[RMDB]
RNA sequence: GGGAACGACUCGAGUAGAGUCGAAAAAACAGCUGCACGUACCUACGAGCAGUUUUCGAAAUAAACGUACGUACGAAAUAAAUAAAUUCUACUCGAUGCGAAACAAAGCAAAGUCGUUCCCAGGGAACUAAAGGUAGAACUUCGGUUCUACCUUUAGAAAAGAAACAACAACAACAAC
Reactivity to DMS in 0.01 (KOAc 150mM, MgCl2 10mM, bicine 150mM(pH8.5), 24C), signal-to-noise 3, nucleotides 027 to 126: a120a060c170a110g000c070u010g020c000a140c000g000u010a110c160c170u000a040c050g000a120g010c040a050g000u010u000u000u000c050g010a100a050a120u000a090a100a100c050g010u000a070c250g000u000a060c010g050a090a070a050u010a100a100a080u010a050a050a010u020u000c000u000a010c000u010c000g020a270u000g000c000g000a060a070a100c290a020a090a210g000c020a140a150a020g000u010c010g000u000u000c000c000c000a030g000g010g000a080a150
Reactivity to 2A3 in 0.01 (KOAc 150mM, MgCl2 10mM, bicine 150mM(pH8.5), 24C), signal-to-noise 2, nucleotides 027 to 126: a000a010c090a010g000c010u020g030c000a000c010g140u160a240c030c070u130a020c010g000a000g030c010a000g030u000u000u020u030c010g040a130a000a050u200a110a090a020c030g040u110a020c080g040u070a010c010g030a180a070a010u090a020a060a010u080a030a060a000u090u010c000u020a020c010u000c000g010a040u080g000c040g020a140a170a050c060a070a060a000g000c000a080a110a000g000u000c000g000u000u010c000c000c000a000g010g030g000a070a010